RNA sequence: GGGAACGACUCGAGUAGAGUCGAAAAGAAAGGCAGCCACUGCAGCCCACGCAGCCAGUCGAUGCAUGCUUUUGCAUGCCGCCCACGACUGAGGGCAGCUGCGGCACUGAGGGCAGCUGCCGAAAGACCUCGUAUGAUACUUCGGUAUCAUACGAGGAAAAGAAACAACAACAACAAC
Reactivity to 2A3 in 0.01 (KOAc 150mM, MgCl2 10mM, bicine 150mM(pH8.5), 24C), signal-to-noise 3, nucleotides 027 to 126: g090a040a120a000g020g000c000a010g000c040c040a110c140u150g050c030a060g000c020c000c010a020c020g000c010a000g030c060c000a010g020u050c050g040a040u180g000c000a000u010g010c020u150u220u300u300g000c020a000u010g000c020c010g040c000c030c000a050c030g090a020c040u050g040a130g040g110g000c020a010g000c000u020g000c000g000g010c070a060c160u170g050a160g000g010g000c010a010g010c000u010g010c000c000g010a020a000a000g040a030
Reactivity to DMS in 0.01 (KOAc 150mM, MgCl2 10mM, bicine 150mM(pH8.5), 24C), signal-to-noise 3, nucleotides 027 to 126: g010a050a100a120g000g000c000a010g000c020c090a170c090u000g000c090a050g010c140c040c060a190c050g020c010a010g000c020c000a030g010u000c050g000a150u000g000c000a000u000g000c000u000u000u000u000g020c000a000u010g000c010c140g000c030c050c080a300c050g010a030c010u000g000a130g020g030g010c100a130g000c010u000g000c000g000g000c300a100c130u010g000a110g000g000g020c050a090g000c000u000g000c000c000g000a040a080a120g000a170